Chemical mapping of a 207-nucleotide RNA with DMS and 2A3. It was measured as part of the RMDB library M2RFPK. The RNA was probed in 150 mM KOAc, 10 mM MgCl2 and 150 mM bicine (pH 8.5) at 24 C. The 2A3 profile rests on 2,825 reads.
RNA sequence: GGGAACGACUCGAGUAGAGUCGAAAAUCGCGUUGGCUGCCUAAUUCAAGGAAUUAGCGUGCCUUCAUGCUAAGGGUUUGAUAUCUGCUAAAACCCGGUGCAUUCAUCAAUGCAGGUUAAGCCAUAGAAACGGCUCACGAAUUCGUUCGUGAGCCAACUUAGGAUGGAAGUUCGCUUCCAUCCUAAGAAAAGAAACAACAACAACAAC
Reactivity to DMS in 0.01 (KOAc 150mM, MgCl2 10mM, bicine 150mM(pH8.5), 24C), signal-to-noise 3, nucleotides 027 to 156: u010c040g000c070g000u000u000g000g010c030u000g030c100c020u010a030a030u000u010c040a220a170g010g010a070a070u000u000a020g020c000g020u000g000c040c020u000u010c020a080u000g030c000u010a300a170g000g010g000u000u000u000g010a140u010a030u010c030u010g000c030u010a130a020a030a030c000c000c010g020g060u000g000c000a070u000u010c050a120u000c100a090a190u010g000c020a020g010g010u000u010a060a100g000c030c040a110u000a130g000a070a120a140c120g010g010c000u000c000a010c000g000a030a070u000u010c300g010u010u000c010g030u000g000a000g020c000c000a000a010
Reactivity to 2A3 in 0.01 (KOAc 150mM, MgCl2 10mM, bicine 150mM(pH8.5), 24C), signal-to-noise 3, nucleotides 027 to 156: u100c030g000c030g050u030u010g020g030c020u070g010c010c050u020a020a030u060u040c150a290a130g140g050a090a020u000u000a030g010c050g050u040g000c010c000u000u030c050a040u080g000c000u010a020a050g020g000g000u000u030u000g050a040u040a060u040c020u040g010c010u030a020a000a000a040c000c000c000g020g010u010g000c030a100u030u240c030a050u110c090a170a090u230g000c010a000g050g000u070u160a140a020g040c070c040a100u080a120g120a020a090a050c100g010g000c010u000c000a000c010g000a010a010u080u080c160g040u120u010c000g000u050g020a000g000c000c000a000a000